[RMDB]
RNA sequence: GGGAACGACUCGAGUAGAGUCGAAAACAUUGACAGUCAAAAAAUACAAGUAAAGGGAGGAGUUUGGUUCCUGUAAAGCUUUUGACUCUGGAGAAAAUGCCUUUCUCUGUGACGGAAAGACCCUUUACACCAGGGUAAGAUUCGUCUUACCCUGGUGAAAAGAAACAACAACAACAAC
Reactivity to DMS in 0.01 (KOAc 150mM, MgCl2 10mM, bicine 150mM(pH8.5), 24C), signal-to-noise 2, nucleotides 027 to 126: c040a130u010u030g030a110c110a080g010u030c040a000a010a020a110a080a090u010a100c100a080a120g000u000a010a000a040g000g000g020a040g010g000a080g010u010u000u000g020g010u020u010c010c010u000g000u010a020a040a130g000c050u010u000u000u000g010a060c080u000c010u000g010g000a000g000a010a030a050a150u000g030c240c190u000u000u010c010u000c010u000g000u000g030a100c120g000g010a030a040a030g000a160c010c020c010u000u000u000a020
Reactivity to 2A3 in 0.01 (KOAc 150mM, MgCl2 10mM, bicine 150mM(pH8.5), 24C), signal-to-noise 1, nucleotides 027 to 126: c020a050u080u170g080a060c050a050g070u080c110a060a000a000a000a130a040u230a140c110a190a000g020u010a060a050a000g000g000g010a020g000g020a020g000u090u190u190g100g050u150u000c000c010u000g030u050a070a050a110g000c010u030u070u000u030g040a070c000u040c010u060g030g000a020g050a010a070a060a140u240g080c000c050u000u030u010c000u040c030u030g130u110g050a010c050g020g010a010a010a010g010a030c000c010c000u010u030u030a030
Source: RMDB library OK2TST, as collected in RNAgym. An RNA of 177 nucleotides, treated with DMS and 2A3 and read out base by base. For 2A3 the reverse transcriptase was SuperScript II with manganese. DMS adducts were read by reverse transcription with MarathonRT. Conditions: 150 mM KOAc, 10 mM MgCl2 and 150 mM bicine (pH 8.5), 24 C. The 2A3 profile rests on 910 reads. For DMS, 1,685 sequencing reads were counted.